[RMDB]
RNA sequence: GGGAACGACUCGAGUAGAGUCGAAAAGAUAUGGACAUAGAAGGGAGCUCCUCGGAAACGAGAGAGCGAGGAUCUUCGUGUCCUAAGUCAAAAGCAGCAAGUGUACCUUCGGGUACACUUGCUGCAACAACACGUAGAACUUCGGUUCUACGUGUUGAAAAGAAACAACAACAACAAC
Reactivity to 2A3 in 0.01 (KOAc 150mM, MgCl2 10mM, bicine 150mM(pH8.5), 24C), signal-to-noise 1, nucleotides 027 to 126: g050a010u060a070u130g000g010a000c000a000u080a300g000a000a000g000g000g000a000g000c000u010c000c000u000c000g000g040a030a080a060c010g000a010g010a010g000a010g100c000g020a040g020g010a010u000c000u020u020c030g000u000g000u000c020c000u000a160a030g040u000c030a030a000a090a120g000c000a000g000c000a020a000g000u010g030u000a010c000c000u110u230c300g050g000g000u020a000c000a010c000u010u000g000c000u000g000c010a000a000
Reactivity to DMS in 0.01 (KOAc 150mM, MgCl2 10mM, bicine 150mM(pH8.5), 24C), signal-to-noise 2, nucleotides 027 to 126: g010a040u010a300u000g000g000a020c000a010u000a090g050a010a010g010g000g010a060g000c000u000c000c000u000c000g000g000a090a070a200c000g010a010g010a160g010a010g020c000g000a010g010g000a020u000c000u000u000c030g020u000g000u000c000c000u010a000a080g020u010c060a070a070a130a160g000c000a000g010c000a010a020g010u000g000u010a000c000c020u000u010c270g030g030g030u000a000c000a000c020u000u000g000c000u000g020c000a010a090
The record gives the reactivity of an RNA of 177 nucleotides to 2A3 and DMS. It was measured as part of the RMDB library TTRDEL. 2A3 adducts were read by reverse transcription with SuperScript II with manganese. The RNA was probed in 150 mM KOAc, 10 mM MgCl2 and 150 mM bicine (pH 8.5) at 24 C. The 2A3 profile rests on 2,901 reads.